[RMDB]
RNA sequence: GGGAACGACUCGAGUAGAGUCGAAAAGAGAUGGCGAGAGCCAUCGGUAGUAUAGCGAAAAUCAUAAAUGAGAAGAGCUCUAAACGCCUAAGUAGAGUUAAAAUAAUUUGACAGGCACUACUACAAACACGGCCUCGAACGUUCGCGUUCGAGGCAACAAGUGACUUUGGUUCGCCAAAGUCACUUGAAAAGAAACAACAACAACAAC
Reactivity to 2A3 in 0.01 (KOAc 150mM, MgCl2 10mM, bicine 150mM(pH8.5), 24C), signal-to-noise 1, nucleotides 027 to 156: g110a010g000a000u000g000g010c020g020a060g020a010g020c000c000a000u000c000g000g000u040a020g000u000a020u110a060g030c080g050a030a020a000a120u090c060a080u110a240a190a140u140g050a050g010a140a000g020a020g000c000u000c000u050a090a070a050c100g010c040c010u030a040a040g020u030a010g080a000g020u040u100a010a220a070a050u170a030a130u050u030u050g090a090c070a020g060g000c010a000c060u020a010c000u020a060c050a030a090a010c130a000c100g140g010c000c000u010c000g000a000a000c000g020u090u090c140g000c010g160u020u000c000g040a000g000g010c000a000a000